The record gives the reactivity of an RNA of 207 nucleotides to DMS and 2A3.
RNA sequence: GGGAACGACUCGAGUAGAGUCGAAAAUAAGGGUUUGUCCACACCCACAAUUUUUGCUGUGGCACGCAACAAUGUGUUUCCAACUGCCUUUGCCAUUGUGAUUUCUUGCGCCAUCCUAUAUGAAGUAUUGUUUGGCAAAGUUAUGAUAACAUUGGUCACGUGGUAAAAGUUUCGACUUUUACCACGUAAAAGAAACAACAACAACAAC
Reactivity to DMS in 0.01 (KOAc 150mM, MgCl2 10mM, bicine 150mM(pH8.5), 24C), signal-to-noise 3, nucleotides 027 to 156: u000a080a150g010g020g000u000u000u010g010u010c020c040a110c090a090c030c020c040a120c070a080a090u000u010u010u000u010g030c050u010g020u000g020g020c060a080c140g000c040a080a070c030a070a060u000g010u010g000u000u000u020c060c060a070a100c130u000g020c070c010u000u000u000g030c120c030a070u000u000g000u010g010a160u000u000u000c050u000u000g020c040g020c030c000a020u020c030c050u010a130u020a100u010g020a040a120g030u000a060u010u010g010u000u010u010g010g010c040a050a020a050g030u000u000a080u010g020a100u000a070a050c010a080u000u000g010g010u000c080
Reactivity to 2A3 in 0.01 (KOAc 150mM, MgCl2 10mM, bicine 150mM(pH8.5), 24C), signal-to-noise 4, nucleotides 027 to 156: u160a060a080g020g030g030u040u090u180g060u040c030c000a030c000a010c010c050c000a040c070a070a080u080u140u120u140u130g050c040u050g010u060g050g000c040a010c060g020c010a030a120c030a070a100u080g040u010g040u140u070u020c030c030a050a050c090u080g030c010c000u070u060u070g020c010c020a040u030u050g050u050g070a100u050u100u050c060u060u080g020c040g010c010c010a010u030c000c020u070a070u010a030u250g150a080a010g020u020a010u030u170g040u040u050u050g000g000c000a020a000a000g020u080u060a090u130g080a020u050a090a030c020a050u060u080g040g030u090c080
The 2A3 profile rests on 4,814 reads. It was measured as part of the RMDB library OK3TST.